[RMDB]
RNA sequence: GGGAACGACUCGAGUAGAGUCGAAAAUCGGUUUCGUAUUCUUAAUACUUACAUUGAAGGCAUCAAUGAUUCCAUUUUUAAAUAUGGCCAGUUGGCACGGAAUAUUGCGUCUAUCAAAUCCAAACAUGAUUUUGAUGUUGCUUGGGUGGAAGAAGCGUGCAUGAUGAUGUUUCGACAUCAUCAUGCAAAAAGAAACAACAACAACAAC
Reactivity to 2A3 in 0.01 (KOAc 150mM, MgCl2 10mM, bicine 150mM(pH8.5), 24C), signal-to-noise 3, nucleotides 027 to 156: u020c000g030g000u030u050u060c040g030u050a120u000u100c090u100u210a200a030u040a180c030u080u020a080c020a170u070u110g030a050a040g060g000c040a090u050c000a110a090u110g070a020u070u030c030c030a010u070u000u000u030u190a070a190a070u200a090u030g030g010c010c010a160g120u240u220g070g000c070a000c010g000g040a020a020u020a070u010u090g010c030g020u000c000u030a120u090c040a000a080a020u020c030c040a080a070a080c080a050u120g000a060u070u070u070u080g050a020u040g050u130u030g000c050u020u030g050g070g000u030g010g020a080a010g020a000a000g070c040g000
Reactivity to DMS in 0.01 (KOAc 150mM, MgCl2 10mM, bicine 150mM(pH8.5), 24C), signal-to-noise 1, nucleotides 027 to 156: u000c040g000g000u000u000u000c060g010u000a080u010u000c090u000u000a050a120u000a040c060u000u000a230c080a100u010u010g010a120a130g040g010c130a200u000c020a050a090u000g020a190u010u000c050c020a120u000u000u030u000u000a030a060a110u010a020u010g010g020c070c030a230g010u000u000g010g030c060a100c060g000g010a090a130u000a110u000u010g010c060g020u020c090u000a100u010c060a020a100a100u000c020c000a040a080a060c030a100u010g050a150u000u010u000u000g040a100u020g000u010u010g020c040u010u000g010g020g090u000g020g010a060a040g000a020a010g010c120g070
Chemical mapping of a 207-nucleotide RNA with 2A3 and DMS.
The RNA was probed in 150 mM KOAc, 10 mM MgCl2 and 150 mM bicine (pH 8.5) at 24 C.